[RMDB]
RNA sequence: GGGAACGACUCGAGUAGAGUCGAAAAGAUAUGGAUUCGUAAGGCCUUGGAUUUAUGGGUGACCGAGGCUACAUCGGAAACGAUGUAGCCUCGCGAGCCCAUUGUCAGGCUGAAGAAUCCUAAGUCACGUAUAGUAGGGCUUCGGCCCUACUAUACGAAAAGAAACAACAACAACAAC
Reactivity to DMS in 0.01 (KOAc 150mM, MgCl2 10mM, bicine 150mM(pH8.5), 24C), signal-to-noise 1, nucleotides 027 to 126: g030a020u000a300u000g010g000a000u030u000c000g010u040a300a300g000g030c000c030u000u000g010g030a000u000u000u000a000u000g000g000g000u010g010a300c300c000g010a040g010g080c000u000a000c000a030u000c030g000g000a100a130a220c000g000a060u000g080u000a000g040c060c010u000c000g020c010g000a300g000c000c000c000a000u000u000g080u000c030a030g000g000c010u000g040a080a130g040a010a000u000c010c000u000a000a210g030u000c040a280